[RMDB]
RNA sequence: GGGAACGACUCGAGUAGAGUCGAAAAAGGAACAGAGGCCGCAAUAUUUGCAAAUGAACUAGUGGAAAUGUAUUUUCAGUAUGCAAAUUUUAAAGGAUGGAAUUGCAAAUUUAUAUCAAAAAGUGCAGUCCAAGGACUUGAAGCGAUAACGGAGGCACUACUAUUUAUAGUUCGCUAUAAAUAGUAGAAAAGAAACAACAACAACAAC
Reactivity to 2A3 in 0.01 (KOAc 150mM, MgCl2 10mM, bicine 150mM(pH8.5), 24C), signal-to-noise 4, nucleotides 027 to 156: a020g010g000a010a020c010a010g030a040g080g010c060c030g030c110a110a100u060a050u100u020u030g020c000a010a070a080u080g020a060a030c070u060a090g110u060g090g090a090a090a110u140g030u110a140u040u040u040u030c020a020g020u040a080u010g000c010a000a060a060u060u120u130u180a120a090a000g030g030a000u050g010g020a070a080u080u020g000c020a000a020a090u130u160u050a140u040a040u150c090a110a140a030a020a000g050u020g010c020a010g010u000c010c010a020a020g030g010a010c030u070u060g030a020a000g030c010g040a020u030a100a010c060g020g000a020g040g000c040a010
Reactivity to DMS in 0.01 (KOAc 150mM, MgCl2 10mM, bicine 150mM(pH8.5), 24C), signal-to-noise 2, nucleotides 027 to 156: a140g010g000a110a060c050a130g010a140g040g030c010c050g030c080a090a070u000a070u000u000u000g020c020a050a070a130u000g000a060a020c050u010a090g030u000g030g000a050a090a070u000g000u020a100u000u000u010u010c010a080g010u000a140u000g020c030a030a040a090u010u010u000u000a040a090a080g030g000a080u000g010g000a060a040u000u000g000c030a000a050a150u000u020u000a070u000a170u030c060a070a080a030a030a120g020u000g010c050a060g010u000c010c010a070a210g010g010a090c040u020u000g010a070a110g030c070g020a060u010a030a070c090g000g000a060g030g050c020a150
The data come from the RNA Mapping Database (RMDB), library OK3TST. This 207-nucleotide RNA was probed chemically with 2A3 and DMS. Values are in units of 0.01, from 0 to 300, in steps of 10. The DMS profile rests on 4,448 reads.